[RMDB]
RNA sequence: GGGAACGACUCGAGUAGAGUCGAAAAAAAAGAUAUGGACUAUUCCACAACGUCACAGGCUAUGAAGCAAAGUCGGAAACGACUUUGUGGAGCCUGUGUUAUGGUGUGGAUAGUCCUAAGUCAAAAACUAGAGAAUUAUCUUCGGAUAAUUCUCUAGAAAAGAAACAACAACAACAAC
Reactivity to DMS in 0.01 (KOAc 150mM, MgCl2 10mM, bicine 150mM(pH8.5), 24C), signal-to-noise 1, nucleotides 027 to 126: a050a020a080a130g020a030u010a300u010g000g000a000c020u010a000u010u000c010c000a010c000a030a060c020g020u000c010a020c000a000g000g000c010u000a150u000g010a160a210g040c010a000a000a010g000u000c020g010g010a100a050a160c010g000a010c020u000u000u000g000u000g020g000a000g060c010c000u000g010u000g000u010u000a030u000g020g000u010g010u000g010g010a010u000a000g000u000c000c000u000a000a030g000u030c010a110a100a110a130a110
Reactivity to 2A3 in 0.01 (KOAc 150mM, MgCl2 10mM, bicine 150mM(pH8.5), 24C), signal-to-noise 1, nucleotides 027 to 126: a000a000a000a000g000a000u010a030u080g010g000a010c050u070a020u300u210c020c000a030c020a220a210c080g090u040c000a010c000a010g010g000c010u080a100u300g010a000a020g000c000a010a000a000g000u000c020g000g030a000a000a040c010g020a000c000u010u000u010g040u000g010g000a000g000c010c000u000g040u010g000u010u000a100u090g250g040u010g000u020g050g010a010u010a000g000u000c000c000u000a010a000g010u000c010a000a000a220a040a120

Chemical mapping of a 177-nucleotide RNA with DMS and 2A3.
The reactions ran in a buffer of 150 mM KOAc, 10 mM MgCl2 and 150 mM bicine (pH 8.5), at 24 C.
DMS adducts were read by reverse transcription with MarathonRT.